RNA sequence: GGGAACGACUCGAGUAGAGUCGAAAAGGCCUGGCUGGACAGAGUUGUCAUGUGUCUGCCUGUCUACACUUGCUGUGCAGAACAUCCGCUCACCUGUACAGCAGGCACAGACAGGCAGUCACAUGACGCGUAUGACAAAUUUCGAUUUGUCAUACGCAAAAGAAACAACAACAACAAC
Reactivity to DMS in 0.01 (KOAc 150mM, MgCl2 10mM, bicine 150mM(pH8.5), 24C), signal-to-noise 9, nucleotides 027 to 126: g000g010c020c010u000g010g020c030u000g010g010a080c070a100g010a140g010u010u010g020u000c000a000u000g010u000g000u010c000u000g000c000c000u010g000u000c000u010a170c260a200c010u000u000g010c000u000g000u000g000c000a000g000a130a180c140a100u010c070c070g010c030u000c090a120c140c010u000g000u000a000c010a010g000c000a000g010g000c100a290c270a030g000a010c000a000g000g010c000a000g000u000c000a000c000a000u000g010a000c020
Reactivity to 2A3 in 0.01 (KOAc 150mM, MgCl2 10mM, bicine 150mM(pH8.5), 24C), signal-to-noise 9, nucleotides 027 to 126: g060g020c010c010u030g040g010c040u050g020g030a040c040a040g100a050g120u160u170g010u060c000a000u000g000u000g000u010c000u000g000c000c000u000g000u000c000u020a030c050a010c080u000u010g000c000u000g000u000g010c000a000g020a080a040c030a150u080c040c060g040c050u050c030a060c020c000u000g000u000a000c000a000g000c000a000g000g000c040a020c030a050g000a000c000a000g000g000c000a000g000u000c000a000c000a000u000g000a000c000
Structure probing data (DMS and 2A3) for a 177-nucleotide construct. The RNA was probed in 150 mM KOAc, 10 mM MgCl2 and 150 mM bicine (pH 8.5) at 24 C. Reactivities are given for positions 27 through 126.